[RMDB]
RNA sequence: GGGAACGACUCGAGUAGAGUCGAAAAGUAAAGGCGAGUGAGAAGAUCACAGAAUGCCAAAAGCACGCUUACAAACGGACAUCUCUGAGCAAAAGUGCACGCAAUAAGCGAAAGAUGCCGAAAAAAAGAUGGAACUAGUAUUCGUACUAGUUCCAUCAAAAGAAACAACAACAACAAC
Reactivity to DMS in 0.01 (KOAc 150mM, MgCl2 10mM, bicine 150mM(pH8.5), 24C), signal-to-noise 3, nucleotides 027 to 126: g020u030a080a140a120g000g030c020g030a100g010u000g000a050g000a090a120g000a170u000c010a000c020a110g030a130a100u010g020c010c030a040a120a080a150g010c000a080c080g020c030u010u000a050c200a040a100a080c060g020g020a030c030a010u010c000u000c100u010g020a260g000c040a070a090a080a160g000u000g010c060a140c120g000c030a070a050u010a110a160g030c010g000a040a080a070g010a050u000g000c010c000g000a000a000a040a090a020a050a080
Reactivity to 2A3 in 0.01 (KOAc 150mM, MgCl2 10mM, bicine 150mM(pH8.5), 24C), signal-to-noise 3, nucleotides 027 to 126: g060u080a070a030a040g040g010c020g030a050g020u020g020a060g010a200a070g060a070u020c010a000c000a040g190a120a080u130g000c000c000a030a030a000a000g020c000a000c040g040c010u030u130a070c070a080a110a020c030g020g050a040c000a040u020c010u020c070u130g070a030g050c020a000a040a100a120g080u090g050c060a020c050g000c020a060a230u130a300a030g010c000g010a100a050a000g010a020u010g000c000c000g130a100a030a020a010a010a010a010

An RNA of 177 nucleotides, treated with DMS and 2A3 and read out base by base. The reactions ran in a buffer of 150 mM KOAc, 10 mM MgCl2 and 150 mM bicine (pH 8.5), at 24 C. 2A3 adducts were read by reverse transcription with SuperScript II with manganese. For 2A3, 2,572 sequencing reads were counted. Values cover nucleotides 27 to 126. For DMS, 1,784 sequencing reads were counted.